The data come from the RNA Mapping Database (RMDB), library TTRINS. An RNA of 177 nucleotides, treated with 2A3 and DMS and read out base by base. The reactions ran in a buffer of 150 mM KOAc, 10 mM MgCl2 and 150 mM bicine (pH 8.5), at 24 C. 2A3 adducts were read by reverse transcription with SuperScript II with manganese. The DMS profile rests on 974 reads.

RNA sequence: GGGAACGACUCGAGUAGAGUCGAAAAGAUAUGGAUAACGAGUCUCUAGCGUGGCCUAUGAAGUAUUACUCAGUAGUCGGAAACGACUACGAAGGAAUAUGGAGGCUCGGGCUCGUUAUCCUAAGUCCCUUGAGGAAUUGUUCGCAAUUCCUCAAGGAAAAGAAACAACAACAACAAC
Reactivity to 2A3 in 0.01 (KOAc 150mM, MgCl2 10mM, bicine 150mM(pH8.5), 24C), signal-to-noise 1, nucleotides 027 to 126: g060a000u170a020u300g020g000a000u020a000a000c020g010a000g060u030c040u020c190u300a170g260c070g300u300g120g000c010c000u300a300u200g020a010a000g010u000a040u050u090a160c020u060c180a030g000u000a020g030u000c010g100g000a040a200a110c010g000a000c040u010a000c000g000a000a010g000g010a000a030u030a020u080g000g070a000g000g000c000u010c040g030g010g060c000u000c020g000u010u020a010u000c000c010u010a010a000g000u030c000
Reactivity to DMS in 0.01 (KOAc 150mM, MgCl2 10mM, bicine 150mM(pH8.5), 24C), signal-to-noise 1, nucleotides 027 to 126: g000a110u000a200u000g040g000a040u000a000a040c000g020a060g000u000c030u000c300u010a130g030c230g000u000g010g030c000c000u010a300u030g020a140a120g000u000a000u000u000a050c000u000c060a300g010u000a000g010u000c000g000g000a120a130a300c020g030a010c000u000a000c000g000a190a080g000g000a030a030u000a010u000g010g000a040g010g050c000u000c040g000g010g000c000u000c000g020u010u000a010u000c010c000u010a020a140g010u010c000